This 177-nucleotide RNA was probed chemically with 2A3 and DMS. The RNA was probed in 150 mM KOAc, 10 mM MgCl2 and 150 mM bicine (pH 8.5) at 24 C. For 2A3 the reverse transcriptase was SuperScript II with manganese.

[RMDB]
RNA sequence: GGGAACGACUCGAGUAGAGUCGAAAAGAGAUUAUGCCCUGAUUCUCACCGCCGAGUAAAGCAUUUAUGUAUCAAUUCUCCAGUCAGAUGGAACCAAAGCGCGGUAUCGCUUAUGGCUACGCUACCGGCAUAGGUAUAAUUUCGAUUAUACCUAUGCAAAAGAAACAACAACAACAAC
Reactivity to 2A3 in 0.01 (KOAc 150mM, MgCl2 10mM, bicine 150mM(pH8.5), 24C), signal-to-noise 9, nucleotides 027 to 126: g040a000g000a030u080u090a050u280g020c010c000c000u030g050a110u090u020c020u010c020a040c020c050g020c020c030g020a030g060u110a060a110a030g020c020a030u070u140u080a160u190g100u030a080u090c040a060a110u110u010c030u000c030c010a030g030u030c000a010g060a170u060g040g030a020a020c010c010a060a040a020g030c040g000c060g070g080u050a080u170c010g000c010u050u070a090u150g030g000c010u030a020c040g010c020u040a050c010c030g060
Reactivity to DMS in 0.01 (KOAc 150mM, MgCl2 10mM, bicine 150mM(pH8.5), 24C), signal-to-noise 9, nucleotides 027 to 126: g010a090g000a090u000u010a080u000g010c010c010c020u010g010a120u000u000c020u000c030a140c070c060g020c050c050g000a080g010u010a060a110a120g000c040a060u000u010u000a050u020g020u000a080u000c080a070a130u000u000c030u000c020c040a070g010u000c120a060g010a080u000g010g010a080a090c040c030a040a060a060g010c060g020c100g000g000u000a050u000c030g000c030u000u000a070u000g010g000c030u000a080c060g010c050u000a070c040c060g010